RNA sequence: GGGAACGACUCGAGUAGAGUCGAAAAGUAGAUGAAGAAGAUGUAGAUGGUGGAGGUGGCGGACAAUUCCACACCCGUAAUGUACCACCGCUACCGUUAAUUGGUAAGUUUUGAUAGACCUCACUAAGUCUCAGGCAUGAUUCGUCAUGCCUGAGACAAAAGAAACAACAACAACAAC
Reactivity to 2A3 in 0.01 (KOAc 150mM, MgCl2 10mM, bicine 150mM(pH8.5), 24C), signal-to-noise 1, nucleotides 027 to 126: g030u040a020g010a210u180g080a140a120g030a080a010g030a070u180g060u170a020g000a060u100g030g000u000g020g060a050g020g020u020g030g020c170g080g060a050c210a200a120u180u020c020c020a020c020a040c040c030c000g020u130a200a110u220g050u160a160c000c020a020c000c020g060c000u000a000c030c060g020u000u090a050a020u150u090g050g020u020a070a070g000u010u080u080u070g110a110u040a060g010a020c010c000u000c000a020c040u060a050a000
Reactivity to DMS in 0.01 (KOAc 150mM, MgCl2 10mM, bicine 150mM(pH8.5), 24C), signal-to-noise 1, nucleotides 027 to 126: g000u010a050g010a070u010g000a050a160g060a130a050g000a130u000g020u000a070g010a050u000g030g030u000g010g010a070g000g020u000g010g000c150g030g010a090c230a040a060u040u000c000c050a110c060a050c080c010c100g000u000a050a050u000g020u000a130c010c000a000c000c030g060c010u000a000c000c080g020u000u000a060a050u000u010g000g000u000a070a090g020u000u000u000u020g010a090u000a050g000a060c040c050u000c070a070c140u000a050a170